[RMDB]
RNA sequence: GGGAACGACUCGAGUAGAGUCGAAAACGCUGGGCCACCUAAGGCGUUGGCGAGGAUCAUACUGAAGCGCGCACGGUAUGGGAGCUGACGCUAUGGUGGCCUGUGCUGAAGCGCGCACGGCAACCGAAAGGUGCGAUCACUUGGAUUCGUCCAAGAAUCCUAAGAAAUCAUUCGUGAUUUCUUAGGAAAAAGAAACAACAACAACAAC
Reactivity to 2A3 in 0.01 (KOAc 150mM, MgCl2 10mM, bicine 150mM(pH8.5), 24C), signal-to-noise 2, nucleotides 027 to 156: c040g010c010u030g000g000g030c020c000a000c000c000u070a130a070g120g000c010g020u000u000g020g010c030g040a250g010g120a110u160c010a000u010a010c030u050g040a230a060g030c010g000c000g000c010a010c000g040g000u010a000u010g100g050g030a010g000c000u000g010a010c000g000c010u020a060u080g000g000u000g000g000c000c000u010g000u000g000c010u030g020a150a020g000c010g000c000g000c010a010c020g030g030c040a050a050c010c000g040a090a030a040g000g010u030g010c010g020a070u140c060a030c140u010u000g000g000a020u060u090c140g040u030c130c000a000a000g040a030a050
Reactivity to DMS in 0.01 (KOAc 150mM, MgCl2 10mM, bicine 150mM(pH8.5), 24C), signal-to-noise 2, nucleotides 027 to 156: c070g060c020u010g000g020g000c000c020a020c020c010u030a140a170g010g000c000g040u000u020g030g000c020g000a140g040g000a070u000c010a050u000a040c000u020g020a060a050g060c030g030c010g030c010a300c070g000g080u000a040u000g010g010g010a140g020c000u000g020a030c010g020c010u000a070u030g000g030u000g030g010c010c000u040g010u000g000c040u020g030a070a050g000c000g040c040g010c000a300c020g000g000c010a110a130c000c040g020a060a080a150g030g030u000g000c010g010a170u010c080a090c010u000u000g000g000a110u000u000c250g010u000c010c000a010a030g000a090a150
Chemical mapping of a 207-nucleotide RNA with 2A3 and DMS. In probing experiments dimethyl sulfate is read out at A N1 and C N3, which are open when not base-paired. For DMS the reverse transcriptase was MarathonRT. For DMS, 4,588 sequencing reads were counted. The reactions ran in a buffer of 150 mM KOAc, 10 mM MgCl2 and 150 mM bicine (pH 8.5), at 24 C. For 2A3 the reverse transcriptase was SuperScript II with manganese.